Structure probing data (2A3 and DMS) for a 177-nucleotide construct.
RNA sequence: GGGAACGACUCGAGUAGAGUCGAAAAUAUGGACGCGGUUGCUGGUGAAUACCCGUGUAUGGCGUUGCUGACACGGACGAGCAGUGCGAUGUCGGGCGCUGUUUCAAGUCCUAGCCUGCGCUAGAGAAGUCUGACUUCCUUUCGAGGAGGUCGGGCUAAAAGAAACAACAACAACAAC
Reactivity to 2A3 in 0.01 (KOAc 150mM, MgCl2 10mM, bicine 150mM(pH8.5), 24C), signal-to-noise 7, nucleotides 027 to 126: u160a050u040g050g010a010c000g000c000g010g010u050u120g010c010u000g000g010u050g030a030a020u060a090c000c010c000g000u010g010u030a170u040g020g000c060g070u030u180g030c000u010g000a010c000a000c020g020g030a010c010g010a010g010c030a010g020u020g020c010g080a130u080g060u090c010g020g050g000c000g000c000u010g010u000u130u040c040a040a010g020u000c000c000u000a010g000c000c020u050g000c030g000c020u030a000g010a010g030a150
Reactivity to DMS in 0.01 (KOAc 150mM, MgCl2 10mM, bicine 150mM(pH8.5), 24C), signal-to-noise 8, nucleotides 027 to 126: u040a070u010g010g000a090c030g010c030g000g020u010u020g010c020u000g010g010u020g010a090a080u030a090c130c020c010g010u020g010u010a070u020g000g010c010g020u020u040g010c000u010g000a050c020a030c040g000g000a090c100g000a030g000c050a050g010u000g000c010g010a080u010g010u020c080g010g000g010c030g010c010u000g000u000u000u000c050a070a120g010u020c020c000u000a050g010c010c040u010g000c060g010c020u000a030g000a110g010a100

For DMS the reverse transcriptase was MarathonRT.